[RMDB]
An RNA of 177 nucleotides, treated with 2A3 and read out base by base. 2A3 adducts were read by reverse transcription with SuperScript II with manganese.
RNA sequence: GGGAACGACUCGAGUAGAGUCGAAAAGACGAGGAUGAGGAGGACAACGAAAACGAUGCCAGCCAUUUGGACGAGUUUCGCUCGCCCUCGCCGGAUCUAGCAGGUGGAGUUGUGCCCCACAAGGACCCCCGACUACCCGUUUCGACGGGUAGUCGGGAAAAGAAACAACAACAACAAC
Reactivity to 2A3 in 0.01 (KOAc 150mM, MgCl2 10mM, bicine 150mM(pH8.5), 24C), signal-to-noise 1, nucleotides 027 to 126: g030a090c110g000a070g020g050a270u300g010a090g000g010a070g020g200a060c000a020a040c050g080a010a010a000a000c000g040a070u300g040c000c000a000g010c000c130a250u280u270u070g020g000a080c040g020a020g140u010u010u010c000g020c050u000c000g050c000c000c000u000c000g000c000c000g000g040a040u000c000u050a000g090c040a050g000g300u090g000g020a000g000u000u000g050u020g040c020c000c100c020a050c000a000a000g060g050a060c000c030